[RMDB]
RNA sequence: GGGAACGACUCGAGUAGAGUCGAAAACCUGUUAUCUGACCAAUAACAGAAUGCACCACAGCGUAAAAUCAUCUGAUUGGGUGAGUUGGUCGCGCCGCCAUUUGACGAACGAACGCCAAGCCUAAGCACUACGAGUAUGUGUUCGCACAUACUCGAACCUGUUAAGGUGCUUCGGCACCUUAACAGGAAAAGAAACAACAACAACAAC
Reactivity to 2A3 in 0.01 (KOAc 150mM, MgCl2 10mM, bicine 150mM(pH8.5), 24C), signal-to-noise 2, nucleotides 027 to 156: c020c000u000g000u000u000a020u010c000u000g010a030c030c000a020a020u030a000a000c000a010g020a080a060u170g020c060a030c010c050a050c080a010g070c000g050u090a040a130a080a120u070c030a010u010c050u100g070a130u140u190g050g020g000u050g000a060g000u030u030g030g000u040c010g020c000g000c030c030g110c010c040a080u060u090u140g040a040c070g050a180a000c050g030a030a030c070g030c050c050a050a030g030c010c030u110a070a020g090c040a070c150u150a060c040g000a000g000u000a000u000g010u000g010u020u040c130g020c010a000c000a000u000a000c000u000c000g000a000a000
Structure probing data (2A3) for a 207-nucleotide construct. Source: RMDB library M2RFPK, as collected in RNAgym.